[RMDB]
RNA sequence: GGGAACGACUCGAGUAGAGUCGAAAAUACACUUUACGUGUGCUGGUUUCAUUACUUUGUCCCAAACCAGGCACGCGUAAUUAAAGGCCAGUUUGGCCAGGUGCGCGUUAUCGAUGGUCACCAAUAACACGUCAACUACAUUCGUGUAGUUGACGUGAAAAGAAACAACAACAACAAC
Reactivity to DMS in 0.01 (KOAc 150mM, MgCl2 10mM, bicine 150mM(pH8.5), 24C), signal-to-noise 3, nucleotides 027 to 126: u010a090c090a110c080u010u000u000a000c020g010u000g000u000g020c010u000g000g010u000u010u010c130a080u000u000a120c200u000u010u010g010u000c000c040c040a040a020a010c010c010a040g010g020c000a000c000g010c010g020u000a000a020u010u000a050a060a050g000g000c000c000a120g010u000u010u000g010g030c000c010a020g010g020u000g000c060g020c090g000u000u000a240u000c030g000a040u020g000g000u000c030a080c040c040a090a070u000a060a120
Reactivity to 2A3 in 0.01 (KOAc 150mM, MgCl2 10mM, bicine 150mM(pH8.5), 24C), signal-to-noise 2, nucleotides 027 to 126: u110a010c030a030c070u020u010u010a000c000g010u000g010u000g010c000u010g010g000u040u040u060c080a110u080u180a140c120u170u150u170g040u100c000c020c000a010a000a000c010c010a070g210g020c000a000c000g000c000g000u010a010a000u030u090a140a070a020g000g010c030c000a090g110u080u210u110g050g000c000c010a010g000g020u010g010c080g000c020g060u160u070a140u230c050g030a060u090g050g050u100c000a010c040c010a030a040u150a050a030

Structure probing data (DMS and 2A3) for a 177-nucleotide construct. For 2A3 the reverse transcriptase was SuperScript II with manganese. Conditions: 150 mM KOAc, 10 mM MgCl2 and 150 mM bicine (pH 8.5), 24 C. DMS adducts were read by reverse transcription with MarathonRT.